[RMDB]
RNA sequence: GGGAACGACUCGAGUAGAGUCGAAAAGAUAUGGAUCCACCUUUCAACAGCUAGUCAAUCGGAAACGAUUGCUAGACAUGAAGCGUGGAUCCUAAGUCAAACCAUCUAAUGUUCGCAUUAGAUGGAACCCACUGUAUAUCUUCGGAUAUACAGUGGGAAAAGAAACAACAACAACAAC
Reactivity to 2A3 in 0.01 (KOAc 150mM, MgCl2 10mM, bicine 150mM(pH8.5), 24C), signal-to-noise 7, nucleotides 027 to 126: g000a000u020a010u070g000g000a000u000c000c000a010c000c020u080u120u070c270a300a300c140a210g020c000u050a010g240u300c050a010a010u000c000g010g000a000a000a010c000g010a010u000u000g000c010u000a000g010a020c060a300u300g000a000a010g030c030g070u000g000g000a000u000c000c000u000a000a000g000u000c010a010a080a160c000c000a000u000c000u000a000a000u010g050u080u100c300g000c200a000u000u000a000g000a010u000g000g000a010a010
Reactivity to DMS in 0.01 (KOAc 150mM, MgCl2 10mM, bicine 150mM(pH8.5), 24C), signal-to-noise 4, nucleotides 027 to 126: g000a000u000a030u020g000g010a010u000c000c000a000c000c010u000u000u000c010a190a120c290a150g000c010u000a000g010u020c030a000a010u000c010g020g010a000a000a030c000g010a000u000u000g000c010u000a010g010a010c130a090u020g000a010a010g010c300g010u000g000g000a010u000c000c000u000a000a060g000u000c000a150a110a220c000c000a010u000c000u000a000a000u000g000u010u010c260g030c010a000u000u010a000g000a000u000g010g000a040a090